RNA sequence: GGGAACGACUCGAGUAGAGUCGAAAAACUGAUACCUUACGUGGUAUCAGAAUGACUUCGUGGUAGAGCGCCACGAACGGAAAAUAAAGAAAGCUCGAUUGAAACGCACCGUGUACGCACGGUGCGAAAAAGUCGAUCCAGUUCGCUGGAUCGACAAGAUCUAGUCCAAGUUCGCUUGGACUAGAUCAAAAGAAACAACAACAACAAC
Reactivity to 2A3 in 0.01 (KOAc 150mM, MgCl2 10mM, bicine 150mM(pH8.5), 24C), signal-to-noise 1, nucleotides 027 to 156: a000c000u000g000a000u030a010c000c000u120u230a180c210g200u150g010g000u000a000u000c000a010g030a010a020u050g030a050c060u000u000c000g020u000g020g020u020a150g020a000g010c010g000c030c000a000c030g000a020a000c080g010g060a080a030a000a010u050a020a020a020g130a040a060a000g000c000u000c020g090a120u090u240g140a070a040a000c000g000c000a000c000c020g000u030g000u070a030c130g000c110a010c000g000g000u000g030c000g000a000a000a000a000a000g000u010c000g000a000u000c000c000a000g030u070u080c150g090c110u000g060g000a000u010c020g010a000c000a000a010

Chemical mapping of a 207-nucleotide RNA with 2A3.
The RNA was probed in 150 mM KOAc, 10 mM MgCl2 and 150 mM bicine (pH 8.5) at 24 C.
The 2A3 profile rests on 802 reads.